[RMDB]
Conditions: 150 mM KOAc, 10 mM MgCl2 and 150 mM bicine (pH 8.5), 24 C. Chemical mapping of a 207-nucleotide RNA with 2A3. Values cover nucleotides 27 to 156. For 2A3 the reverse transcriptase was SuperScript II with manganese. It was measured as part of the RMDB library OK3TST.
RNA sequence: GGGAACGACUCGAGUAGAGUCGAAAACUGAAGCUAUUUCUCUUAUGAAUGCUCAAAUUGUCCCAUUUUUGGCCAGCGAGAGCCUCUUUCAUUUGGCUCCUGAGUCUAUUUGCAUGACCCUCGUUGUCAUUGGUAGCAUCCUUGCUAAGUGAUAUAAGGCGUAAUAUGCAUUCGUGCAUAUUACGCCAAAAGAAACAACAACAACAAC
Reactivity to 2A3 in 0.01 (KOAc 150mM, MgCl2 10mM, bicine 150mM(pH8.5), 24C), signal-to-noise 1, nucleotides 027 to 156: c040u050g050a070a030g020c000u000a070u140u040u040c090u010c090u150u250a300u300g000a040a000u150g000c000u000c000a050a140a240u130u160g050u000c000c040c040a090u080u100u000u050u120g040g000c030c030a030g010c000g180a080g000a000g030c000c000u000c030u030u300u000c070a290u130u020u020g000g040c040u010c050c010u010g070a120g000u000c030u090a180u110u050u210g050c050a040u080g000a010c030c010c000u150c180g050u020u100g010u000c010a010u080u040g010g010u000a000g000c000a000u140c110c080u040u080g000c000u000a040a030g190u230g050a070u210a040u120a300a000